[RMDB]
RNA sequence: GGGAACGACUCGAGUAGAGUCGAAAACCUUUCCUCGUCAUCCUGGGUCAACCUCUUAAGUUCCUCUUCCUCCUCCUUGCUGAGGUUCUUCCCUCCCGCGCUGAGUUGAUUCUUCUUGUUCUUGAGGGCCUUCCUUCGUCGGUGAUCCUGCCUCUCCCACCCUAGUAAUGUUCGCAUUACUAGGGUGAAAAGAAACAACAACAACAAC
Reactivity to 2A3 in 0.01 (KOAc 150mM, MgCl2 10mM, bicine 150mM(pH8.5), 24C), signal-to-noise 2, nucleotides 027 to 156: c010c000u040u020u030c010c030u050c010g080u050c030a100u000c000c010u050g010g030g030u120c020a060a070c020c020u080c030u130u150a160a050g010u020u080c010c030u020c010u060u030c000c030u060c020c000u040c000c000u020u080g060c070u060g060a030g070g000u050u040c010u070u040c030c010c010u020c050c030c000g050c010g030c020u050g010a040g020u050u020g070a100u100u000c000u070u000c020u060u100g050u110u050c010u060u060g050a110g020g030g000c010c000u050u060c010c000u040u060c020g100u000c010g040g020u010g030a050u030c000c000u030g040c000c000u020c010u030c000c010
Reactivity to DMS in 0.01 (KOAc 150mM, MgCl2 10mM, bicine 150mM(pH8.5), 24C), signal-to-noise 1, nucleotides 027 to 156: c030c000u000u010u000c010c010u000c050g010u000c040a100u000c010c020u000g010g030g000u000c070a080a110c040c020u000c020u000u010a100a200g050u000u000c020c030u000c070u000u000c020c000u020c050c030u000c000c040u010u000g040c080u000g000a060g020g030u010u000c040u000u000c020c000c030u000c030c040c020g050c120g070c030u020g000a180g010u020u000g030a130u010u010c020u000u000c060u000u000g000u000u010c020u000u010g050a130g010g010g010c000c000u000u010c030c050u010u000c000g000u010c050g030g030u010g010a080u010c080c030u020g000c030c010u000c020u010c030c030

The record gives the reactivity of an RNA of 207 nucleotides to 2A3 and DMS. Reactivities are given for positions 27 through 156. Conditions: 150 mM KOAc, 10 mM MgCl2 and 150 mM bicine (pH 8.5), 24 C. For 2A3, 1,777 sequencing reads were counted. Source: RMDB library VIROID, as collected in RNAgym.